Structure probing data (2A3 and DMS) for a 177-nucleotide construct.
For 2A3, 2,312 sequencing reads were counted.
For DMS the reverse transcriptase was MarathonRT.
The DMS profile rests on 1,988 reads.

RNA sequence: GGGAACGACUCGAGUAGAGUCGAAAAGACCUGCUUUUGAACCCGCUAAUCCACCCCAACUCUUGCCCCGACGUUCACUCCACGCGCUAAUUCCCGGGGGCCCCACAGCCCCCACACUCCCUCUCGGGAGGGGGUAUAACUUCGGUUAUACCCCCUCAAAAGAAACAACAACAACAAC
Reactivity to 2A3 in 0.01 (KOAc 150mM, MgCl2 10mM, bicine 150mM(pH8.5), 24C), signal-to-noise 2, nucleotides 027 to 126: g050a030c010c010u030g020c000u050u050u030u120g030a050a050c000c000c000g020c050u060a050a040u050c020c010a030c000c000c000c010a010a040c020u020c030u030u060g030c010c000c030c010g020a040c060g020u030u080c020a020c030u040c030c010a010c010g080c000g020c040u050a080a070u040u040c010c010c020g000g000g000g000g000c010c000c000c030a090c030a010g000c000c000c000c010c000a000c000a000c000u020c000c000c000u040c010u020c020g040g040
Reactivity to DMS in 0.01 (KOAc 150mM, MgCl2 10mM, bicine 150mM(pH8.5), 24C), signal-to-noise 2, nucleotides 027 to 126: g010a120c050c040u010g000c060u000u020u060u010g000a050a200c000c000c070g020c120u070a130a070u010c010c010a080c020c010c000c030a060a040c080u050c040u010u010g000c050c000c010c020g020a030c130g000u040u020c050a100c030u000c040c020a120c060g000c000g020c030u000a080a150u000u000c000c010c010g000g000g000g000g030c000c140c080c170a110c220a140g020c000c000c000c000c040a040c100a040c120u000c030c000c000u020c050u000c060g000g020